[RMDB]
RNA sequence: GGGAACGACUCGAGUAGAGUCGAAAAGUCUGCCUUGACAGGGCAUCUGAAGCCCGUCGGAGGAGAAAUCAAGACCUAUACUCAAGAUAGUAUUGGAAGCUCCGGAUUAUCUUCGGAAGUUGCCUUACUCACGUAGUACGUUCGCGUACUACGUGAGAAAAGAAACAACAACAACAAC
Reactivity to DMS in 0.01 (KOAc 150mM, MgCl2 10mM, bicine 150mM(pH8.5), 24C), signal-to-noise 3, nucleotides 027 to 126: g010u000c020u000g000c010c000u010u000g020a040c020a130g070g000g000c000a070u000c200u020g000a200a180g000c010c000c030g000u000c010g000g010a050g010g000a030g010a020a040a040u010c130a150a190g020a070c020c000u000a090u000a020c020u000c040a090a110g010a090u010a050g000u000a020u000u000g030g020a080a090g000c050u010c010c000g010g020a000u010u000a110u000c300u000u000c050g020g000a040a130g010u000u000g000c010c010u000u000a110
Reactivity to 2A3 in 0.01 (KOAc 150mM, MgCl2 10mM, bicine 150mM(pH8.5), 24C), signal-to-noise 2, nucleotides 027 to 126: g050u020c040u030g170c030c000u010u010g000a020c140a290g010g000g010c020a050u150c130u300g190a240a090g000c000c000c000g000u010c000g020g000a010g000g000a020g020a010a060a030u110c020a040a060g020a050c000c020u020a020u050a060c030u050c060a080a040g020a210u120a030g090u040a020u060u120g030g010a030a010g030c010u000c020c000g010g000a050u190u110a090u230c030u050u020c000g060g010a070a090g070u070u080g040c020c020u030u010a030
Source: RMDB library OK2TST, as collected in RNAgym. An RNA of 177 nucleotides, treated with DMS and 2A3 and read out base by base. For DMS the reverse transcriptase was MarathonRT.